[RMDB]
RNA sequence: GGGAACGACUCGAGUAGAGUCGAAAAUGUGGAUGGAAUUAAAGCUGGGUUUGUAGUGAGCCAUUAGGAUUAUGGCAAAUGUCUAGUGUACAGAAUUCAGUGUAGGCCGGGAGUUGAGACUGGUGUGGCGAAUUAACUACUUCGGUAGUUAAUUCGCAAAAGAAACAACAACAACAAC
Reactivity to DMS in 0.01 (KOAc 150mM, MgCl2 10mM, bicine 150mM(pH8.5), 24C), signal-to-noise 1, nucleotides 027 to 126: u060g000u030g000g000a080u000g000g000a110a110u000u030a060a090a160g000c000u010g000g020g020u000u000u000g000u030a030g020u000g020a150g000c060c000a060u010u050a020g010g000a170u010u070a050u000g000g060c000a030a070a030u050g000u020c060u030a030g000u040g000u040a060c040a040g030a140a080u020u000c010a030g000u000g000u000a030g010g020c010c000g000g030g000a130g000u030u010g000a050g050a070c120u060g020g040u020g000u000g000
Reactivity to 2A3 in 0.01 (KOAc 150mM, MgCl2 10mM, bicine 150mM(pH8.5), 24C), signal-to-noise 1, nucleotides 027 to 126: u200g010u040g010g000a040u000g000g000a100a050u170u040a190a000a020g000c000u020g000g020g090u020u090u020g070u040a150g000u090g200a000g000c040c000a020u130u090a050g090g010a100u280u100a000u090g000g000c000a020a020a020u080g050u000c040u040a090g090u020g070u100a000c020a010g010a000a000u000u000c000a000g020u000g020u300a130g070g000c050c000g000g000g010a010g000u050u050g060a020g020a000c060u000g000g000u060g020u060g060

Background:
Structure probing data (DMS and 2A3) for a 177-nucleotide construct. The reactions ran in a buffer of 150 mM KOAc, 10 mM MgCl2 and 150 mM bicine (pH 8.5), at 24 C. DMS adducts were read by reverse transcription with MarathonRT.